[RMDB]
RNA sequence: GGGAACGACUCGAGUAGAGUCGAAAACAUGCUGCAAAGCAAUUUUACAUAACAUCCUAGUGCAAAGUGAAACUUAUUAAACAAGAGUUAAGUUGACUGUUUAAAGCACAGUUGAAGGAGUUCUUAUUAAAUUUAAGCUGCAUUGAAUGUACAUGAACAUAUCCUAAUUAUUCGUAAUUAGGAUAUGAAAAGAAACAACAACAACAAC
Reactivity to DMS in 0.01 (KOAc 150mM, MgCl2 10mM, bicine 150mM(pH8.5), 24C), signal-to-noise 5, nucleotides 027 to 156: c030a270u000g010c020u000g010c050a100a160a180g020c070a050a090u000u000u010u000a140c080a120u000a110a110c050a110u020c040c020u000a090g030u000g020c000a080a260a120g040u010g000a100a040a040c010u010u000a040u000u030a080a050a060c030a030a030g000a070g010u000u000a030a170g030u000u010g010a020c000u000g010u000u000u010a090a090a240g030c300a030c010a020g010u000u000g010a050a060g000g010a090g010u000u000c010u010u000a050u000u010a050a060a140u000u000u000a040a060g030c020u000g000c010a050u010u000g000a050a040u000g000u000a040c080a080u000g000a090a220
Reactivity to 2A3 in 0.01 (KOAc 150mM, MgCl2 10mM, bicine 150mM(pH8.5), 24C), signal-to-noise 5, nucleotides 027 to 156: c000a010u050g000c010u010g010c040a050a040a100g020c020a010a020u020u040u040u030a080c070a040u120a070a020c010a150u010c010c010u050a050g000u000g030c020a050a080a060g030u070g080a110a030a010c010u020u050a030u110u210a200a190a060c080a100a050g100a020g110u060u040a030a000g000u040u020g050a010c010u010g110u170u170u230a070a070a010g020c020a010c000a010g050u140u140g120a040a000g010g010a010g010u040u040c020u070u120a130u030u070a050a060a040u030u060u020a040a030g010c010u010g000c010a010u070u070g090a090a040u090g030u090a080c060a130u120g050a060a010